[RMDB]
RNA sequence: GGGAACGACUCGAGUAGAGUCGAAAAGAUAAACUUUAGCAGUUUCAUGAAAAAGCUGAAACCAGCAUACAGCGUGGAGUUACUGAGUUCGGGAGCGGUGAUGAUAGGUGGUAUCGGGACAGGUAGGGAUAUUAAGCUAUCCGUUACGGAUAUUAUACACUCUGUUACUGUUCGCAGUAACAGAGUGAAAAGAAACAACAACAACAAC
Reactivity to 2A3 in 0.01 (KOAc 150mM, MgCl2 10mM, bicine 150mM(pH8.5), 24C), signal-to-noise 4, nucleotides 027 to 156: g040a030u170a060a120a050c090u110u120u170a060g010c060a010g010u080u060u010c050a040u130g080a060a060a070a020a010g050c030u010g020a070a040a020c030c010a020g020c020a020u070a150c030a030g040c030g040u050g020g010a040g000u020u030a030c030u060g040a030g050u040u110c050g030g000g040a040g030c030g010g060u040g010a050u010g000a010u050a070g070g010u020g000g010u040a070u090c040g010g010g020a030c030a020g000g050u070a030g030g010g000a010u030a030u170u080a050a010g030c010u020a020u000c010c000g060u120u090a040c100g000g000a010u010a040u090u070a040u010a020
Reactivity to DMS in 0.01 (KOAc 150mM, MgCl2 10mM, bicine 150mM(pH8.5), 24C), signal-to-noise 2, nucleotides 027 to 156: g000a150u010a070a110a100c030u020u000u010a090g040c030a050g000u000u000u010c010a090u000g010a070a220a050a120a120g010c060u000g010a110a110a040c020c010a110g060c000a210u000a110c030a120g010c050g020u000g030g000a140g030u020u000a060c040u010g000a130g000u000u000c080g020g000g000a140g040c060g010g030u000g000a080u000g030a090u010a040g030g020u000g000g020u000a060u000c040g000g000g030a060c080a010g030g010u010a070g000g020g010a090u000a110u000u010a060a130g050c110u010a030u010c010c000g000u000u000a120c110g040g010a040u010a030u000u000a040u010a170